[RMDB]
RNA sequence: GGGAACGACUCGAGUAGAGUCGAAAAGCGGGUUUGAGAGGUAAGCGUCGCGGCCUGCUUCCAGGCUACCCUGAUUUUGGUUCGUGGCUCCUCCUGACCCUGAGAACCUCUGUCGCCUCAGAUCAGAGACUUCAACGACUUUCGAGUCGUUGAAGUCAAAAGAAACAACAACAACAAC
Reactivity to DMS in 0.01 (KOAc 150mM, MgCl2 10mM, bicine 150mM(pH8.5), 24C), signal-to-noise 2, nucleotides 027 to 126: g010c280g000g000g000u030u020u000g020a100g000a010g000g010u020a140a080g000c120g020u000c010g010c010g040g000c040c000u000g030c030u010u000c200c040a050g000g010c270u000a090c250c010c000u000g000a040u000u000u000u030g020g000u070u000c000g010u000g030g030c000u000c020c020u000c000c000u000g000a070c000c000c060u030g010a150g000a120a270c120c010u000c050u020g000u000c030g000c060c080u010c120a120g040a100u000c050a010g000a140
Reactivity to 2A3 in 0.01 (KOAc 150mM, MgCl2 10mM, bicine 150mM(pH8.5), 24C), signal-to-noise 2, nucleotides 027 to 126: g130c060g000g070g000u040u050u010g250a260g010a010g140g000u110a130a000g090c030g120u060c030g000c000g030g000c010c000u080g000c040u110u000c100c020a040g010g000c120u110a060c050c000c000u010g000a030u020u060u080u040g020g000u000u300c000g000u000g000g000c010u030c050c000u000c000c010u000g000a000c000c000c000u000g000a020g000a050a060c000c010u000c000u030g030u020c030g050c050c050u120c060a030g010a080u090c020a010g040a000